[RMDB]
Structure probing data (2A3 and DMS) for a 177-nucleotide construct. Values cover nucleotides 27 to 126. For DMS, 18,371 sequencing reads were counted. 2A3 adducts were read by reverse transcription with SuperScript II with manganese. Reactivities are rounded to 0.1 and cut off at 0 and 3. Conditions: 150 mM KOAc, 10 mM MgCl2 and 150 mM bicine (pH 8.5), 24 C.

RNA sequence: GGGAACGACUCGAGUAGAGUCGAAAACGAGAUGAGUUCGCUCAUCUCGAAAGAACCGCGGGCGUGACUCGGUCAGAGCAUGACAGGCGCUGCGGUGACGAAAAAGUGGUGUGUUCGCACACCACAAUCUUGAAUCAUAGUUCGCUAUGAUUCAAGAAAAAGAAACAACAACAACAAC
Reactivity to 2A3 in 0.01 (KOAc 150mM, MgCl2 10mM, bicine 150mM(pH8.5), 24C), signal-to-noise 6, nucleotides 027 to 126: c010g010a000g000a010u010g000a010g040u060u120c170g080c080u010c000a000u000c000u000c000g000a010a020a010g020a020a010c000c000g000c040g050g020g020c020g020u050g120a150c030u070c180g080g000u040c040a020g030a070g170c160a120u060g020a020c010a030g050g010c010g000c020u010g000c000g000g020u010g030a050c080g080a090a050a020a030a020g000u000g000g000u000g000u000g010u040u090c220g020c080a000c000a000c000c000a000c000a000a000
Reactivity to DMS in 0.01 (KOAc 150mM, MgCl2 10mM, bicine 150mM(pH8.5), 24C), signal-to-noise 9, nucleotides 027 to 126: c010g010a010g010a000u000g010a010g020u000u020c240g030c000u000c000a010u000c000u000c000g000a030a070a080g010a190a030c010c000g010c010g000g000g000c010g010u000g000a150c080u010c150g010g020u000c050a030g000a180g010c170a110u010g010a030c030a080g000g000c020g010c010u000g000c010g000g000u000g010a070c170g000a070a060a050a100a100g020u000g000g010u000g010u000g010u000u010c200g010c010a010c000a000c000c000a000c000a030a030